An RNA of 207 nucleotides, treated with DMS and 2A3 and read out base by base.
RNA sequence: GGGAACGACUCGAGUAGAGUCGAAAAGGUGUAGUUCGCUACACCAAAAAAGGGGUCCCUCGUUGAUCUAUGACUCCCGAAUCCUGAAGCCUCCACGGGCUGGGAGGAGUAGGGAGAGGGACGGAGGCACCCAAAAACACGAAGUUCGCUUCGUGAACUAUAAAUUUGGAUUCGUCCAAAUUUAUAGAAAAGAAACAACAACAACAAC
Reactivity to DMS in 0.01 (KOAc 150mM, MgCl2 10mM, bicine 150mM(pH8.5), 24C), signal-to-noise 3, nucleotides 027 to 156: g010g020u000g010u000a010g000u010u000c290g030c000u000a010c010a010c000c010a000a010a020a060a070a100g070g000g020g030u000c000c010c000u000c020g010u020u000g010a090u000c040u010a070u010g000a300c000u000c000c010c000g030a120a170u000c010c020u010g000a250a240g000c030c010u000c030c200a240c170g030g010g020c120u000g000g010g020a040g000g000a300g010u000a140g000g000g010a060g000a070g020g010g000a030c010g000g010a060g010g010c070a120c000c000c020a010a100a070a160a190c010a030c020g010a030a050g020u020u020c300g010c020u000u000c020g020u000g020a050a180
Reactivity to 2A3 in 0.01 (KOAc 150mM, MgCl2 10mM, bicine 150mM(pH8.5), 24C), signal-to-noise 3, nucleotides 027 to 156: g000g000u000g000u010a010g010u060u100c180g020c160u020a000c000a020c020c020a050a020a000a000a000a170g020g000g000g010u040c010c020c010u040c040g110u130u030g010a060u000c010u010a040u080g020a050c000u020c020c000c000g060a110a120u150c040c050u080g070a100a030g030c010c010u150c180c080a070c110g020g010g000c030u070g030g020g020a000g000g010a040g000u020a010g000g000g000a010g000a000g000g000g000a000c010g000g010a030g040g010c050a060c000c000c000a080a060a020a020a000c000a000c010g010a010a000g010u050u090c130g060c130u000u000c000g000u000g020a010a000

It was measured as part of the RMDB library RNAMAK. For DMS, 4,406 sequencing reads were counted. For 2A3 the reverse transcriptase was SuperScript II with manganese. The 2A3 profile rests on 3,487 reads.